[RMDB]
RNA sequence: GGGAACGACUCGAGUAGAGUCGAAAAGAUAUGGAUGCAGGCUUCUAUGAAGGUAUCUCGGAAACGAGAGUACUGGAGAAGCUGCAUCCUAAGUCAAAAUCCCAGUGUUGUUCGCAACACUGGGAAAUCCUGUCCUAUACUUCGGUAUAGGACAGGAAAAAGAAACAACAACAACAAC
Reactivity to 2A3 in 0.01 (KOAc 150mM, MgCl2 10mM, bicine 150mM(pH8.5), 24C), signal-to-noise 1, nucleotides 027 to 126: g020a020u000a000u060g000g000a010u010g010c010a080g300g170c060u000u030c030u050a300u110g000a020a000g020g010u000a010u020c000u010c010g020g000a000a000a000c000g000a000g010a030g020u050a000c030u040g010g010a020g010a010a000g000c000u010g010c000a000u000c000c000u000a000a000g000u000c000a030a020a000a300u020c020c010c000a000g000u000g000u000u010g040u030u120c300g010c160a010a000c000a000c000u000g000g010g000a010a000a010
Reactivity to DMS in 0.01 (KOAc 150mM, MgCl2 10mM, bicine 150mM(pH8.5), 24C), signal-to-noise 1, nucleotides 027 to 126: g000a000u000a010u010g020g000a020u000g010c010a000g000g010c000u000u000c000u000a300u020g000a190a190g000g000u000a010u000c000u000c000g010g010a000a000a020c000g000a010g000a020g010u000a010c000u000g000g000a000g000a010a010g000c000u000g000c010a000u000c010c000u000a010a050g010u000c000a100a090a140a170u000c000c000c000a010g030u000g010u000u000g010u000u010c260g010c000a020a020c000a000c010u000g010g000g000a000a000a060
Structure probing data (2A3 and DMS) for a 177-nucleotide construct.
For DMS, 1,370 sequencing reads were counted.
For 2A3, 2,420 sequencing reads were counted.
High 2A3 reactivity points to a flexible backbone, as in loops and unpaired stretches.